[RMDB]
RNA sequence: GGGAACGACUCGAGUAGAGUCGAAAACGCGAAAUUGGUAAAGAGAAGCUCCUUACUGCUGAGGAGGAGAUUACGCUCUCUAAGCAGAUGGAAGAGGGUGAGACCAAAAUUCGGGAUGCUUUGCAAGCCUCUAAGAUCUUUUCGAAGAUCUUAGAGGAAAAGAAACAACAACAACAAC
Reactivity to DMS in 0.01 (KOAc 150mM, MgCl2 10mM, bicine 150mM(pH8.5), 24C), signal-to-noise 7, nucleotides 027 to 126: c090g020c050g010a020a060a240u000u010g000g010u000a050a090a140g010a160g000a100a230g000c040u000c010c010u000u000a140c040u000g010c070u000g000a120g000g000a030g010g010a030g010a120u010u010a090c230g010c030u000c010u010c010u000a220a080g010c040a050g010a130u000g020g010a090a060g000a040g000g010g010u000g000a110g010a080c020c010a010a030a060a160u000u000c020g020g000g010a090u000g000c060u000u010u000g020c130a110a170g000
Reactivity to 2A3 in 0.01 (KOAc 150mM, MgCl2 10mM, bicine 150mM(pH8.5), 24C), signal-to-noise 7, nucleotides 027 to 126: c100g020c010g030a030a020a030u060u030g000g000u110a120a160a040g120a040g030a100a030g030c010u010c010c010u040u120a230c020u030g050c030u060g040a090g070g050a020g050g030a020g020a020u090u170a060c090g010c030u020c000u000c000u030a040a020g030c020a020g040a130u130g070g070a090a050g020a090g030g020g020u050g030a060g040a020c000c000a020a020a030a080u050u040c010g010g040g070a040u070g020c000u080u070u060g050c070a050a040g090